RNA sequence: GGGAACGACUCGAGUAGAGUCGAAAAUAAUCAUCCAACAUUUCGCGAUUUUCAAUCACAACAGCUGCUUUCUGCUGAACUUCUGCAGAUGAUAAGUUACUAUCGGCAAUAUAUAACAGUUCAGUUAAGCAUAGCGUGAUUUCGAUCACGCUAUGCUAAAAGAAACAACAACAACAAC
Reactivity to DMS in 0.01 (KOAc 150mM, MgCl2 10mM, bicine 150mM(pH8.5), 24C), signal-to-noise 2, nucleotides 027 to 126: u120a190a100u110c170a080u010c030c040a220a110c040a120u000u000u100c190g000c040g000a080u000u070u000u000c170a100a140u020c010a080c090a120a100c170a010g000c070u000g010c050u000u010u000c050u000g000c020u000g030a000a000c000u000u080c160u000g030c010a010g000a090u050g010a000u010a000a190g000u000u000a190c210u000a000u000c000g010g000c040a020a010u030a040u000a100u040a070a100c150a070g000u000u000c000a000g060u000u000a130
Reactivity to 2A3 in 0.01 (KOAc 150mM, MgCl2 10mM, bicine 150mM(pH8.5), 24C), signal-to-noise 3, nucleotides 027 to 126: u160a000a120u000c000a120u010c000c000a010a090c000a110u040u180u100c080g070c050g100a100u000u000u080u210c110a080a080u040c030a020c110a140a080c020a100g000c040u050g000c010u010u070u040c000u010g000c010u000g030a050a020c030u100u160c040u090g010c020a000g000a190u020g060a030u070a130a110g090u150u170a100c060u050a000u060c010g000g000c040a120a000u040a000u010a020u000a230a020c040a010g000u030u000c000a000g000u120u040a010

This 177-nucleotide RNA was probed chemically with DMS and 2A3. The reactions ran in a buffer of 150 mM KOAc, 10 mM MgCl2 and 150 mM bicine (pH 8.5), at 24 C. DMS adducts were read by reverse transcription with MarathonRT.